[RMDB]
RNA sequence: GGGAACGACUCGAGUAGAGUCGAAAAGAUGACUUACAGGACUAUUAUGGAACACUAUGGGAGUUAACGUAACGUUGACUCAAGGCAAGUGAACCAUGGUGUUCCACUUGCCUUAAGUCCUGUAAGAGAUAGUUUACGUGUUCGCACGUGAGCUAUCAAAAGAAACAACAACAACAAC
Reactivity to DMS in 0.01 (KOAc 150mM, MgCl2 10mM, bicine 150mM(pH8.5), 24C), signal-to-noise 9, nucleotides 027 to 126: g010a120u030g000a190c010u000u000a010c000a000g010g010a010c000u000a140u020u010a070u000g000g010a050a030c100a050c010u000a010u000g010g000g010a080g010u000u000a000a010c000g020u030a120a090c170g000u000u000g000a010c000u000c010a060a050g000g000c070a040a040g020u010g010a050a240c010c000a070u010g000g010u010g010u000u000c030c010a000c010u000u000g000c060c060u010u010a060a040g010u000c000c000u000g010u000a000a010g000a100
Reactivity to 2A3 in 0.01 (KOAc 150mM, MgCl2 10mM, bicine 150mM(pH8.5), 24C), signal-to-noise 9, nucleotides 027 to 126: g130a080u260g040a030c000u000u000a000c000a000g000g000a000c010u020a050u300u070a090u210g030g020a060a010c020a010c060u030a030u030g040g030g000a010g000u000u000a010a010c030g070u090a180a020c110g000u020u000g000a000c000u010c010a010a010g070g000c050a060a030g040u050g120a030a010c000c010a030u080g050g000u090g000u030u000c010c000a000c000u010u030g030c000c000u050u100a050a000g000u000c000c000u000g000u000a000a000g000a000
Notes:
The data come from the RNA Mapping Database (RMDB), library OK1LIB. This 177-nucleotide RNA was probed chemically with DMS and 2A3. The reactions ran in a buffer of 150 mM KOAc, 10 mM MgCl2 and 150 mM bicine (pH 8.5), at 24 C. Reactivities are rounded to 0.1 and cut off at 0 and 3.